RNA sequence: GGGAACGACUCGAGUAGAGUCGAAAAUUGAUUUUCUUUCUUCUAUUCAAAGGCAAGCGUACUCUUUUCUAGAAUUCAUUUCAUAUUUCCUUCUCCCUACUUUUAGCAGCCUAUAAAGUAACUAGAAUUACAGGGGCAAAGGGGUAGAAAGCAUACCAAUAUCGAGACUAUUCGUAGUCUCGAUAUUAAAAGAAACAACAACAACAAC
Reactivity to DMS in 0.01 (KOAc 150mM, MgCl2 10mM, bicine 150mM(pH8.5), 24C), signal-to-noise 1, nucleotides 027 to 156: u000u000g010a100u010u000u000u000c000u000u010u000c030u000u010c050u020a140u020u000c040a050a050a080g010g020c080a080a080g030c090g020u000a030c030u000c030u000u010u000u010c060u000a080g000a070a080u010u000c060a050u000u000u000c010a060u000a110u000u010u000c020c000u000u010c000u000c020c000c010u000a060c080u000u000u000u000a100g000c030a240g030c030c010u000a110u000a070a060a160g010u010a080a070c030u000a070g030a050a140u000u010a060c050a050g050g020g020g030c140a020a000a020g020g040g050g000u000a050g010a090a020a090g000c080a080u010a040c120c070
Reactivity to 2A3 in 0.01 (KOAc 150mM, MgCl2 10mM, bicine 150mM(pH8.5), 24C), signal-to-noise 1, nucleotides 027 to 156: u010u100g050a030u070u050u000u070c000u050u130u000c020u060u000c080u020a130u020u200c100a130a020a030g010g000c060a090a030g000c020g080u110a110c040u060c000u080u100u110u000c020u120a070g060a090a080u130u040c050a050u070u080u090c050a050u070a150u110u040u070c020c000u050u100c080u110c020c000c000u080a080c000u140u000u000u080a040g000c010a020g020c000c040u090a120u130a210a050a000g000u000a050a040c060u010a120g010a000a000u000u000a020c000a000g000g000g000g120c020a040a010a040g000g000g000g010u000a010g020a000a000a000g030c010a010u030a170c000c010
An RNA of 207 nucleotides, treated with DMS and 2A3 and read out base by base. The data come from the RNA Mapping Database (RMDB), library OK3TST. The DMS profile rests on 1,954 reads. Values cover nucleotides 27 to 156. The RNA was probed in 150 mM KOAc, 10 mM MgCl2 and 150 mM bicine (pH 8.5) at 24 C. Values are in units of 0.01, from 0 to 300, in steps of 10.